[RMDB]
RNA sequence: GGGAACGACUCGAGUAGAGUCGAAAAUGGACAACAGAUAUUAUAGGACUGUUCAUUAUGGACCUGCUGAACUCGCUGCUUGGUUGAAUGACCAAAAAGGCUCUGUUGUUCAGGAGGUGUUAGGUGACUGGUGUGAGUAGUUCGCUACUCACACCAGAAAAGAAACAACAACAACAAC
Reactivity to 2A3 in 0.01 (KOAc 150mM, MgCl2 10mM, bicine 150mM(pH8.5), 24C), signal-to-noise 1, nucleotides 027 to 126: u000g020g020a030c050a180a010c030a040g120a080u130a070u270u250a200u210a160g150g020a030c060u000g000u030u020c060a020u080u120a170u190g090g000a000c000c000u040g000c050u010g110a000a000c000u010c090g000c000u110g050c000u020u050g020g020u050u020g170a250a250u280g010a000c010c000a010a010a000a010a010g010g020c020u080c110u120g300u300u010g000u000u000c000a000g000g000a000g040g010u090g040u130u080a100g010g140u090g000a080
Reactivity to DMS in 0.01 (KOAc 150mM, MgCl2 10mM, bicine 150mM(pH8.5), 24C), signal-to-noise 2, nucleotides 027 to 126: u000g000g000a030c050a050a120c070a120g010a160u000a120u030u030a140u050a190g000g000a150c140u000g010u000u000c030a030u000u000a150u030g020g010a040c020c010u000g000c030u000g030a010a040c030u000c140g020c000u010g020c280u020u030g010g030u010u000g020a150a100u020g010a010c000c010a020a010a060a150a130g000g010c030u000c110u010g010u010u010g000u000u000c010a030g010g000a030g000g010u000g000u000u000a060g000g010u000g000a220